[RMDB]
This 170-nucleotide RNA was probed chemically with 2A3 and DMS.
Reactivities are given for positions 27 through 129.
For 2A3, 60,740 sequencing reads were counted.
RNA sequence: GGGAACGACUCGAGUAGAGUCGAAAAGGUCGGACCGCGAGGAGGUGGAGAUCCCAUGCCGACCCGAAGAGGAAAGGAGGACACGGACGACAAACCGUAAGUUCUACUGCCCUUUAUUGUUGGGUGCCGGGUGAAAUGUUCGCAUUUCACAAAAGAAACAACAACAACAAC
Reactivity to 2A3 in 0.01 (KOAc 150mM, MgCl2 10mM, bicine 150mM(pH8.5), 24C), signal-to-noise 9, nucleotides 027 to 129: g050g010u040c010g010g030a070c010c020g050c040g030a050g010g010a010g000g020u040g010g010a090g010a050u060c010c010c000a020u080g030c010c010g030a030c000c010c010g040a040a020g020a020g020g000a050a020a010g020g010a000g010g000a010c020a010c030g010g030a040c030g020a040c100a050a100a020c010c000g050u070a080a040g020u030u020c020u050a130c030u040g010c000c000c000u050u100u090a140u080u120g090u030u080g010g010g000u030g060c040c000g050g010
Reactivity to DMS in 0.01 (KOAc 150mM, MgCl2 10mM, bicine 150mM(pH8.5), 24C), signal-to-noise 9, nucleotides 027 to 129: g020g040u010c050g000g010a080c040c050g050c110g010a060g000g040a060g010g050u020g010g010a060g000a040u040c050c000c010a080u000g040c030c030g000a040c040c030c040g020a050a050g020a020g020g010a020a100a030g010g000a020g000g000a030c050a020c020g020g030a030c080g040a090c280a080a090a110c000c020g000u030a060a070g020u030u020c040u000a080c060u000g010c210c010c020u000u000u000a040u030u010g020u030u000g000g010g030u030g030c090c010g000g010

The data come from the RNA Mapping Database (RMDB), library 15KLIB.